[RMDB]
The record gives the reactivity of an RNA of 207 nucleotides to 2A3. For 2A3, 2,335 sequencing reads were counted. For 2A3 the reverse transcriptase was SuperScript II with manganese. Source: RMDB library RNAMAK, as collected in RNAgym.

RNA sequence: GGGAACGACUCGAGUAGAGUCGAAAAAAAAAAAAGAUAUGGAAACGAGGUAGAGUGUGGCAAGGCGGAUUUCCAACGGUCAUGUCGGAAACGACAUGACGGUUGGCCGGUCGCUGAUGACCCACACUCCGAAUGCGUUUCCUAAGUCAAAAAAAAACUCAUACACUACGUUCGCGUAGUGUAUGAGAAAAGAAACAACAACAACAAC
Reactivity to 2A3 in 0.01 (KOAc 150mM, MgCl2 10mM, bicine 150mM(pH8.5), 24C), signal-to-noise 2, nucleotides 027 to 156: a000a000a000a000a010a020a050a040g020a020u060a020u060g000g000a000a000a000c000g000a000g030g020u120a010g010a000g010u000g000u000g000g000c040a050a030g000g000c030g000g030a090u120u150u060c000c000a000a000c020g050g000u010c000a000u000g000u000c000g010g020a020a010a020c000g000a000c000a000u000g010a000c010g030g020u000u000g000g010c010c010g100g040u300c000g000c000u030g020a250u010g010a010c000c000c000a000c000a000c000u000c020c010g070a030a030u040g030c000g000u000u000u010c010c000u000a010a010g000u000c020a010a000a010a010a050a040a110a110a030